About this RNA:
The record gives the reactivity of an RNA of 177 nucleotides to 2A3. 2A3 adducts were read by reverse transcription with SuperScript II with manganese. Values cover nucleotides 27 to 126. The reactions ran in a buffer of 150 mM KOAc, 10 mM MgCl2 and 150 mM bicine (pH 8.5), at 24 C.
RNA sequence: GGGAACGACUCGAGUAGAGUCGAAAAACAUACUACGGUAUGAACCCUGAGAGGCGUAGCUCUUCAAACGGUAGCUCUGUGGUUACCUGAUCAAAGCUGCCAGAUGAAGAGCUGUGCUUCCAGGGAAGUUUCCGUGUCGUUUCGACGACACGGAAACAAAAGAAACAACAACAACAAC
Reactivity to 2A3 in 0.01 (KOAc 150mM, MgCl2 10mM, bicine 150mM(pH8.5), 24C), signal-to-noise 2, nucleotides 027 to 126: a000c000a000u000a030c020u020a020c250g090g000u000a000u010g030a110a090c020c000c000u030g210a270g000a010g240g010c010g000u010a000g030c010u000c000u000u000c020a020a000a000c040g000g010u000a020g000c000u010c070u140g140u120g120g070u150u130a190c000c030u110g050a040u040c000a000a010a000g010c000u030g000c000c000a000g000a000u030g000a010a000g000a000g000c000u000g010u000g000c000u010u000c000c000a000g000g000g010a030a000